Chemical mapping of a 177-nucleotide RNA with 2A3 and DMS. For 2A3, 3,939 sequencing reads were counted. The reactions ran in a buffer of 150 mM KOAc, 10 mM MgCl2 and 150 mM bicine (pH 8.5), at 24 C. For DMS the reverse transcriptase was MarathonRT. Reactivities are rounded to 0.1 and cut off at 0 and 3. It was measured as part of the RMDB library M2PK50.
RNA sequence: GGGAACGACUCGAGUAGAGUCGAAAACGGAUCAACUUCGGUUGAUCCGAAAGGGACGGGUCGGGAGGGGGAUACUCGCGGUCCCAAGAAGAAUCCAGACAGAAAGGAAGGUCUUCGGACCUUCCAAGCUAAUAUAACCGUUCGCGGUUAUAUUAGCAAAAGAAACAACAACAACAAC
Reactivity to 2A3 in 0.01 (KOAc 150mM, MgCl2 10mM, bicine 150mM(pH8.5), 24C), signal-to-noise 3, nucleotides 027 to 126: c010g010g000a000u000c000a000a000c000u050u030c150g090g000u000u000g000a000u000c000c000g000a030a000a000g030g010g200a040c100g050g000g150u210c110g040g050g080a160g020g060g010g010g020a020u020a040c020u020c030g050c020g010g020u020c000c000c000a000a030g080a040a010g030a010a030u050c050c000a020g080a080c040a020g160a110a150a010g000g010a000a000g010g000u000c000u020u040c180g040g010a000c000c010u000u000c000c000a000a000
Reactivity to DMS in 0.01 (KOAc 150mM, MgCl2 10mM, bicine 150mM(pH8.5), 24C), signal-to-noise 2, nucleotides 027 to 126: c040g000g000a000u020c010a010a010c010u010u020c130g020g010u000u000g000a000u000c000c000g020a000a070a160g000g000g020a090c090g000g020g010u010c110g040g000g000a190g020g010g050g050g000a090u000a020c040u000c020g020c070g010g010u010c010c010c000a050a080g000a060a080g010a090a020u010c060c040a100g000a120c200a090g010a020a130a050g000g000a010a020g000g010u000c000u000u000c250g000g000a020c000c000u000u000c000c000a010a030